[RMDB]
RNA sequence: GGGAACGACUCGAGUAGAGUCGAAAAGUGCAGAGUGAAAUUCAUAGGUGCACCGCCAAUCUGGCGGAACGACCCGGUACUCCGCGGAGUCGCGUUGUAAACGUUCUGUGUUGGCGUUCAGGCCUCAAAAUUUAGCCUCGUUCGCGAGGCUAAAUUUAAAAGAAACAACAACAACAAC
Reactivity to DMS in 0.01 (KOAc 150mM, MgCl2 10mM, bicine 150mM(pH8.5), 24C), signal-to-noise 2, nucleotides 027 to 126: g000u000g010c040a000g030a140g000u000g030a040a040a040u050u060c060a040u000a060g030g000u000g000c020a070c090c020g020c000c000a100a110u010c120u050g050g020c000g010g000a080a040c080g020a110c020c010c030g000g050u000a040c030u000c040c050g050c110g000g000a140g050u000c000g010c200g010u000u010g020u000a040a040a160c030g020u000u020c050u040g030u080g000u010u000g000g000c130g010u000u030c140a160g000g000c020c000u000c030a030